Structure probing data (DMS and 2A3) for a 207-nucleotide construct. For 2A3 the reverse transcriptase was SuperScript II with manganese. For DMS the reverse transcriptase was MarathonRT. Values cover nucleotides 27 to 156. Source: RMDB library M2RFPK, as collected in RNAgym.

[RMDB]
RNA sequence: GGGAACGACUCGAGUAGAGUCGAAAAACCCUCGCCCGAUGUUCGCUGAUUCGUCAGCCGCAUGCCCAGGUGGCCGCGAUCUUCAAGGCUACGGCGCGGAUAGGUCCGCGCUGAUCGUUUUCCUCUAACCGCAUAACCGGCUUCGGCCGGUUAUGAACUGGUUAACUAUGUUCGCAUAGUUAACCAGAAAAGAAACAACAACAACAAC
Reactivity to DMS in 0.01 (KOAc 150mM, MgCl2 10mM, bicine 150mM(pH8.5), 24C), signal-to-noise 1, nucleotides 027 to 156: a070c000c000c000u020c060g030c020c010c000g020a150u000g000u010u010c040g030c050u000g010a090u000u000c170g060u010c030a020g090c020c050g040c040a010u000g010c060c030c000a120g030g020u000g000g010c020c020g010c100g010a050u000c040u000u000c090a040a300g010g000c010u000a030c000g020g010c040g050c060g010g060a110u000a130g010g040u000c020c000g010c020g030c000u000g010a050u000c000g070u000u000u020u010c020c010u000c050u000a160a150c000c070g000c010a020u000a010a010c000c000g050g040c000u010u000c290g060g050c050c000g000g000u000u000a000u010g020a050a110
Reactivity to 2A3 in 0.01 (KOAc 150mM, MgCl2 10mM, bicine 150mM(pH8.5), 24C), signal-to-noise 3, nucleotides 027 to 156: a010c020c010c020u020c050g060c010c000c010g090a040u060g040u060u110c050g030c020u010g000a050u070u080c150g030u010c100a030g010c020c010g020c010a020u100g030c030c030c010a030g000g020u000g020g000c020c000g060c100g040a000u010c000u040u010c010a010a000g020g000c030u010a010c010g010g010c000g000c010g010g010a060u130a150g150g130u030c000c000g000c020g020c010u010g010a010u000c010g000u080u070u130u140c030c030u140c030u070a080a080c040c040g020c040a000u000a000a000c000c020g000g000c040u050u040c130g070g020c020c010g010g000u000u000a000u000g000a000a010